An RNA of 177 nucleotides, treated with DMS and 2A3 and read out base by base. For 2A3, 4,624 sequencing reads were counted. The RNA was probed in 150 mM KOAc, 10 mM MgCl2 and 150 mM bicine (pH 8.5) at 24 C.

[RMDB]
RNA sequence: GGGAACGACUCGAGUAGAGUCGAAAAUUCAUUCUCUCAAUUGUUCUUUUUAUUUGAGGAAAUUUGAUUGUAUUGCAUAUACAACUAUGCGAUGCACUUUGUUCAUUUUAACUUUGGAUAUAUGUGCCAAUGAUUAGUGGUUCGCCACUAAUCAUUGAAAAGAAACAACAACAACAAC
Reactivity to DMS in 0.01 (KOAc 150mM, MgCl2 10mM, bicine 150mM(pH8.5), 24C), signal-to-noise 5, nucleotides 027 to 126: u010u010c130a120u000u000c020u000c000u000c050a040a060u000u000g000u000u000c010u000u000u000u000u010a060u010u010u000g010a020g000g010a060a040a040u000u000u000g010a070u010u000g010u000a030u000u000g010c010a010u010a010u000a120c300a090a100c110u000a010u000g010c000g020a030u000g000c000a020c300u010u000u010g010u000u000c010a010u000u000u010u010a050a170c130u000u000u000g000g000a010u000a010u010a020u010g010u000g020c140
Reactivity to 2A3 in 0.01 (KOAc 150mM, MgCl2 10mM, bicine 150mM(pH8.5), 24C), signal-to-noise 4, nucleotides 027 to 126: u100u050c010a010u040u000c040u000c000u000c030a040a090u040u040g040u110u050c030u120u180u100u070u140a120u080u090u110g020a010g000g050a030a050a040u090u070u090g050a060u030u110g030u100a030u020u050g010c010a000u030a000u020a110c050a090a040c050u020a020u020g000c010g010a010u030g020c010a010c040u050u060u060g030u050u000c010a020u020u040u040u120a110a120c060u040u020u030g000g000a000u020a000u000a010u100g090u070g050c020